[RMDB]
RNA sequence: GGGAACGACUCGAGUAGAGUCGAAAAAGGCUCUGAGCUGGCUGAUAUUGCCCGAUCUGGAUCUCAGCCUGGGGCCUGGUGCUUAGGAAGGGCGUAGGCUUAGUUGGAGAUUCUAUCUGCAGCUCUCAAUCUUAAGGGUUUUCGAACCCUUAAGAUUAAAAGAAACAACAACAACAAC
Reactivity to DMS in 0.01 (KOAc 150mM, MgCl2 10mM, bicine 150mM(pH8.5), 24C), signal-to-noise 6, nucleotides 027 to 126: a120g010g010c030u010c070u010g000a040g020c030u000g020g020c030u000g000a070u000a090u010u000g000c020c010c030g020a060u010c150u010g000g010a040u000c040u010c010a050g000c050c060u000g020g000g000g000c010c000u000g010g010u010g010c060u000u000a090g010g020a170a140g000g000g010c020g010u000a040g000g000c020u000u000a060g010u000u000g020g020a090g010a030u000u000c040u000a060u000c060u010g010c040a040g020c020u000c030u000c210
Reactivity to 2A3 in 0.01 (KOAc 150mM, MgCl2 10mM, bicine 150mM(pH8.5), 24C), signal-to-noise 3, nucleotides 027 to 126: a000g050g010c030u040c100u100g030a020g020c030u020g080g020c010u000g030a010u030a070u170u210g120c000c000c000g020a130u030c080u150g040g010a010u000c010u000c030a000g030c030c020u050g010g020g050g030c040c010u010g000g060u160g000c060u090u130a060g150g060a070a090g080g040g000c050g110u050a010g000g000c000u060u040a040g040u090u100g130g020a010g000a020u070u000c010u010a070u010c040u090g070c010a020g020c010u000c000u000c070